[RMDB]
RNA sequence: GGGAACGACUCGAGUAGAGUCGAAAAGUGUGGUCUACCACCUGAUGUUCAGGCCCACGGAGACUGAGAGGGCAGGAAUGGUCGGAGGCUCGUCGUUUGGGAAGGGAGACGAUGUGGAUGAGAUAAAGACUCCACUCUGUUUCGACAGAGUGGAGUCAAAAGAAACAACAACAACAAC
Reactivity to DMS in 0.01 (KOAc 150mM, MgCl2 10mM, bicine 150mM(pH8.5), 24C), signal-to-noise 1, nucleotides 027 to 126: g040u000g020u010g000g000u000c020u000a100c080c040a080c010c010u000g000a100u060g000u010u010c020a050g000g030c160c000c000a070c160g000g000a150g040a060c000u040g000a100g060a120g000g000g000c040a040g000g030a070a080u040g010g020u000c000g010g050a120g000g080c000u000c020g010u000c030g040u010u030u000g000g010g020a070a030g000g000g000a090g000a080c060g000a010u050g000u020g040g020a030u000g000a100g020a070u000a020a110a170
Reactivity to 2A3 in 0.01 (KOAc 150mM, MgCl2 10mM, bicine 150mM(pH8.5), 24C), signal-to-noise 3, nucleotides 027 to 126: g130u160g050u130g050g020u030c080u150a140c020c010a070c030c000u040g080a110u060g100u070u130c010a030g030g000c000c050c000a040c080g050g020a080g030a020c050u080g010a020g010a050g090g000g020c060a020g040g010a090a020u080g070g000u050c030g040g000a010g010g000c040u030c030g050u000c000g020u070u190u070g060g000g000a070a000g020g000g000a020g010a000c000g010a070u050g030u070g060g050a060u090g020a030g020a070u100a020a100a000